[RMDB]
Overview:
Chemical mapping of a 207-nucleotide RNA with 2A3 and DMS. For 2A3, 1,238 sequencing reads were counted. 2A3 is a SHAPE reagent: it acylates the 2'-hydroxyl of flexible nucleotides of all four kinds. It was measured as part of the RMDB library M2RFPK. Values cover nucleotides 27 to 156.
RNA sequence: GGGAACGACUCGAGUAGAGUCGAAAACCCUGUCAUGAGGCCGAAACGAAGGCACGUACCCCUUCGAAUGGCGUCGGGGAGUCAGCGGCUAUAUAUGCGCCUAAUGCUGGCAUCCGGGAACGAGUGUAUUAGACAGUAAUCUUCGGAUUACUGUCAACACUAUAGUGGACUUCGGUCCACUAUAGUGAAAAGAAACAACAACAACAAC
Reactivity to 2A3 in 0.01 (KOAc 150mM, MgCl2 10mM, bicine 150mM(pH8.5), 24C), signal-to-noise 3, nucleotides 027 to 156: c010c000c000u010g150u060c100a110u200g030a040g150g000c030c000g120a120a030a040c010g000a020a010g040g060c100a060c080g220u290a150c010c010c000c000u000u020c010g030a080a060u150g020g030c020g010u060c030g000g000g010g000a100g000u030c010a010g000c030g030g000c060u050a020u050a030u030a030u300g120c090g050c020c020u190a180a050u250g000c000u000g000g000c010a170u030c040c000g010g010g040a060a070c080g020a080g040u060g020u060a180u140u030a130g000a000c000a000g000u000a000a000u000c010u040u100c120g060g000a000u000u000a000c000u000g010u000c000a000a000
Reactivity to DMS in 0.01 (KOAc 150mM, MgCl2 10mM, bicine 150mM(pH8.5), 24C), signal-to-noise 2, nucleotides 027 to 156: c010c000c020u000g000u000c080a070u000g000a060g010g050c020c020g000a090a090a230c040g010a080a050g010g020c050a160c120g020u020a140c050c070c020c000u010u000c020g020a120a170u010g020g000c020g010u000c060g010g000g030g010a160g020u010c040a040g050c020g000g000c010u000a100u010a090u000a080u000g010c140g000c030c010u000a100a090u000g020c010u010g010g000c010a040u020c020c030g010g020g000a090a080c050g010a180g010u000g010u020a110u020u000a170g000a050c030a030g000u000a000a000u000c010u010u000c280g050g010a010u000u000a000c000u000g010u000c000a030a110